[RMDB]
RNA sequence: GGGAACGACUCGAGUAGAGUCGAAAAGUGCACUUCGGUGCACAAAAUGCAGGAACUUGUGAGUCUCCUAUUGAAAAUGAACGGGAGACUGGUGAGUUCCCGGGAAAAAGCUAGAGUUCGCUCUAGCCAGAUUACGAUAGUUCGCUAUCGUAAUCUGAAAAGAAACAACAACAACAAC
Reactivity to 2A3 in 0.01 (KOAc 150mM, MgCl2 10mM, bicine 150mM(pH8.5), 24C), signal-to-noise 4, nucleotides 027 to 126: g000u000g000c000a010c020u050u120c270g090g010u010g000c010a010c010a000a050a000a030u150g020c010a030g010g010a010a010c000u040u020g020u090g140a010g010u000c000u000c000c010u020a110u080u230g130a140a110a060a190u180g030a080a020c050g000g000g000a000g000a000c000u000g020g010u020g000a010g010u000u010c030c000c000g030g030g040a090a120a030a020a010g000c000u000a000g000a000g030u050u090c150g020c060u000c000u000a000g010c010
Reactivity to DMS in 0.01 (KOAc 150mM, MgCl2 10mM, bicine 150mM(pH8.5), 24C), signal-to-noise 4, nucleotides 027 to 126: g010u000g000c010a000c000u000u010c150g040g020u000g000c000a000c010a000a050a080a090u010g010c130a060g000g000a020a000c010u000u010g030u010g000a020g010u000c010u000c000c000u000a100u010u000g010a100a110a110a160u010g000a060a050c150g000g010g000a020g010a020c000u000g000g020u000g000a030g010u000u000c000c000c040g000g000g010a050a070a060a070a140g000c000u000a000g000a040g020u010u010c260g020c010u000c000u000a010g020c010
Chemical mapping of a 177-nucleotide RNA with 2A3 and DMS. The DMS profile rests on 4,496 reads. For 2A3 the reverse transcriptase was SuperScript II with manganese. For 2A3, 6,430 sequencing reads were counted. Conditions: 150 mM KOAc, 10 mM MgCl2 and 150 mM bicine (pH 8.5), 24 C. It was measured as part of the RMDB library RFMREP.